[RMDB]
RNA sequence: GGGAACGACUCGAGUAGAGUCGAAAAACAAAGACAUCGGAAGCACUUCCUCGCGUAAUAUUUUGUGUAAUCGUGCGCGACUCCUCUGCCGUUAAUCUAUCAACAAAGUGCGUACCAAUAAAAUCAGCGUCUACUAUGGGUUCGCCCAUAGUAGACGAAAAGAAACAACAACAACAAC
Reactivity to DMS in 0.01 (KOAc 150mM, MgCl2 10mM, bicine 150mM(pH8.5), 24C), signal-to-noise 1, nucleotides 027 to 126: a070c120a130a050a020g000a090c090a100u010c040g040g000a120a160g010c050a040c090u000u010c060c050u010c070g000c000g000u000a080a040u010a110u010u020u000u000g020u020g000u000a020a020u000c070g020u000g010c010g010c000g040a070c140u000c030c000u000c000u000g000c020c020g030u000u000a050a070u020c090u030a110u020c100a060a000c140a020a040a060g040u020g010c010g010u010a100c030c050a170a080u010a050a070a100a110u000c060a100g030
Reactivity to 2A3 in 0.01 (KOAc 150mM, MgCl2 10mM, bicine 150mM(pH8.5), 24C), signal-to-noise 2, nucleotides 027 to 126: a000c060a000a090a010g130a070c040a060u100c090g040g040a060a030g030c010a000c040u070u060c000c020u030c010g000c010g070u040a060a030u040a110u090u080u070u080g300u040g110u140a020a020u060c050g050u040g010c000g000c000g040a030c010u020c000c000u050c030u040g040c020c000g000u040u000a060a010u000c030u080a210u080c050a030a060c020a060a100a060g030u020g000c030g020u060a130c000c020a050a060u040a100a100a000a030u080c040a020g070